[RMDB]
RNA sequence: GGGAACGACUCGAGUAGAGUCGAAAAGCUCUGCGAGACAGAUAGAACAACAAAGAGAGAUCGAAAAUCUUAGAGGAGAGAACGAAUCUGUCGACUUCACUAGGACAUUGUCGAUCAGAGGUCCAAAGACCAUUGUUGGGUUCGCCUAACGAUGGUCAAAAGAAACAACAACAACAAC
Reactivity to 2A3 in 0.01 (KOAc 150mM, MgCl2 10mM, bicine 150mM(pH8.5), 24C), signal-to-noise 9, nucleotides 027 to 126: g030c010u000c000u010g020c030g030a040g020a030c010a010g050a020u100a000g090a060a030c060a030a010c020a020a250a010g110a020g010a000g010a020u020c020g030a020a030a020a050u010c010u020u030a020g010a030g040g010a010g000a010g030a060a030c020g030a050a100u130c090u120g050u040c020g050a090c000u020u020c010a010c030u020a010g000g030a010c020a140u070u120g070u040c000g000a010u030c020a010g020a020g040g040u000c010c010a030a030a010
Reactivity to DMS in 0.01 (KOAc 150mM, MgCl2 10mM, bicine 150mM(pH8.5), 24C), signal-to-noise 9, nucleotides 027 to 126: g000c030u000c010u000g010c050g010a150g010a060c050a050g010a080u020a060g010a080a080c120a090a080c170a050a120a090g010a130g000a130g000a020u010c010g000a040a060a090a180u000c000u000u000a020g000a080g000g000a020g010a100g000a110a030c030g010a090a090u040c090u030g010u000c000g000a300c010u000u010c010a090c020u010a020g000g010a030c140a080u020u010g010u000c020g000a090u000c010a050g000a060g010g000u010c020c030a060a080a090